The data come from the RNA Mapping Database (RMDB), library OK1LIB. Chemical mapping of a 177-nucleotide RNA with 2A3 and DMS. For 2A3, 18,919 sequencing reads were counted.
RNA sequence: GGGAACGACUCGAGUAGAGUCGAAAACGGGGCCGGUCCAGAUCGCGGUCGCCCGGAAGAACUGCGCGAGGCGCGCCGGACCAGGGCGGGGGCAUCGGGCACCGGGAUGGCCGCCGCGACGGCCGACGUAGUCAAGUACAUUCGUGUACUUGACUACAAAAGAAACAACAACAACAAC
Reactivity to 2A3 in 0.01 (KOAc 150mM, MgCl2 10mM, bicine 150mM(pH8.5), 24C), signal-to-noise 9, nucleotides 027 to 126: c020g050g010g020g000c010c020g070g080u070c010c010a060g060a180u200c070g010c000g020g020u010c010g010c000c010c000g010g010a080a070g090a110a050c080u060g000c110g010c010g050a040g040g020c070g000c010g000c060c010g050g080a170c080c080a110g050g010g010c030g000g010g010g110g010c020a050u010c010g020g060g000c020a030c020c000g010g000g000a050u090g000g010c000c000g000c020c020g020c050g010a030c000g010g000c000c000g010a020c040
Reactivity to DMS in 0.01 (KOAc 150mM, MgCl2 10mM, bicine 150mM(pH8.5), 24C), signal-to-noise 4, nucleotides 027 to 126: c020g010g010g010g000c020c000g010g000u020c020c050a170g010a150u020c220g020c030g020g040u000c030g000c000c010c000g000g000a230a040g040a120a140c300u000g010c050g020c020g000a040g000g010c050g010c030g000c010c000g000g000a120c160c210a150g000g000g010c000g010g010g010g020g010c010a040u000c030g000g000g000c010a070c000c030g000g000g010a040u020g020g000c010c000g010c020c060g000c110g000a070c010g010g000c000c010g000a050c090
For DMS the reverse transcriptase was MarathonRT. For 2A3 the reverse transcriptase was SuperScript II with manganese.